[RMDB]
RNA sequence: GGGAACGACUCGAGUAGAGUCGAAAACGAAUGGAGUUCGCUCCAUUCGAAAUCCCAGGGAACGAGUCGAGUAGAGUCGAAAAUCCCACUCAACUCAACUCAAAAGCGAAUGCUUCGGCAUUCGCAAGCAUCAAUUAUUCUUCGGAAUAAUUGAUGCAAAAGAAACAACAACAACAAC
Reactivity to DMS in 0.01 (KOAc 150mM, MgCl2 10mM, bicine 150mM(pH8.5), 24C), signal-to-noise 3, nucleotides 027 to 126: c020g010a010a000u000g010g020a030g020u000u010c220g020c000u000c000c010a010u000u000c000g020a040a080a160u000c000c010c000a140g000g000g010a100a050c150g000a010g020u000c020g010a020g020u000a050g000a020g000u010c080g020a070a090a100a130u000c080c050c020a080c040u010c000a080a010c010u000c010a050a090c020u000c020a070a040a110a100g000c000g020a020a010u000g000c000u000u000c170g010g000c000a010u000u000c000g040c000a010a060
Reactivity to 2A3 in 0.01 (KOAc 150mM, MgCl2 10mM, bicine 150mM(pH8.5), 24C), signal-to-noise 5, nucleotides 027 to 126: c010g000a000a000u000g000g000a000g010u060u070c100g100c080u000c000c000a000u000u000c000g000a010a010a000u020c010c000c010a010g070g040g000a100a080c080g000a000g240u020c000g000a010g010u030a030g010a000g020u060c050g080a100a060a040a130u080c020c010c010a010c010u010c000a000a040c000u020c030a010a020c010u010c040a050a080a050a030g000c000g000a000a000u020g000c000u040u080c230g080g000c010a000u020u000c000g000c000a000a010